This 177-nucleotide RNA was probed chemically with 2A3.
[RMDB]
RNA sequence: GGGAACGACUCGAGUAGAGUCGAAAAGGGCGCAUAGCCUAACGUAGUGUUCUCUUAGUGGACCUUCUGGGUGUCUCUUAAAUCUGUGGCACGGGAACACUGUAGAGGGUUUCCUACUUACUUGCGACGAGGUUGACGAAUUCGUUCGUCAACCUCGAAAAGAAACAACAACAACAAC
Reactivity to 2A3 in 0.01 (KOAc 150mM, MgCl2 10mM, bicine 150mM(pH8.5), 24C), signal-to-noise 1, nucleotides 027 to 126: g030g070g000c030g000c060a080u180a130g000c000c000u080a170a000c060g000u030a000g000u000g040u140u000c000u000c000u020u120a100g000u080g070g020a000c050c040u070u000c030u080g030g180g000u060g040u000c070u030c000u040u170a130a220a300u040c070u110g080u030g000g050c080a000c040g000g000g000a070a000c000a010c040u020g000u000a000g000a010g000g000g000u090u040u000c000c000u010a040c030u050u020a000c000u010u060g110c020g040a000
2A3 adducts were read by reverse transcription with SuperScript II with manganese.